[RMDB]
RNA sequence: GGGAACGACUCGAGUAGAGUCGAAAAGACUCAACGCCGGAAAUCUCACCGGUCCCGACAGUAGUAAUGACGGUCAGGUUGACGACUUUACCCGACGCUACUGAGAGGAGGUGCAUGGCCGCCGUCACAUUCUGAUACUUUUCGAAGUAUCAGAAUGAAAAGAAACAACAACAACAAC
Reactivity to DMS in 0.01 (KOAc 150mM, MgCl2 10mM, bicine 150mM(pH8.5), 24C), signal-to-noise 9, nucleotides 027 to 126: g000a130c040u000c030a120a100c120g010c070c010g000g000a060a080a080u020c110u010c050a070c030c010g000g000u010c010c000c000g000a300c040a020g010u000a010g010u000a070a100u020g010a300c300g000g000u000c300a040g000g010u000u000g000a150c230g000a090c020u010u000u010a040c020c000c000g000a180c170g000c010u000a010c010u000g000a060g000a170g000g000a090g000g010u000g000c300a080u010g000g000c010c010g000c100c020g000u010c080a150
Reactivity to 2A3 in 0.01 (KOAc 150mM, MgCl2 10mM, bicine 150mM(pH8.5), 24C), signal-to-noise 9, nucleotides 027 to 126: g040a010c020u020c070a050a030c060g040c040c010g020g060a070a100a080u100c070u020c030a020c010c010g070g110u030c010c000c000g020a020c010a000g030u040a000g010u030a110a200u140g030a020c020g010g000u030c060a020g010g050u040u070g130a070c140g010a010c020u020u020u030a030c000c000c000g020a020c060g010c010u020a010c010u020g010a020g010a010g060g020a020g010g010u020g020c060a080u140g050g010c010c000g010c020c010g040u040c010a010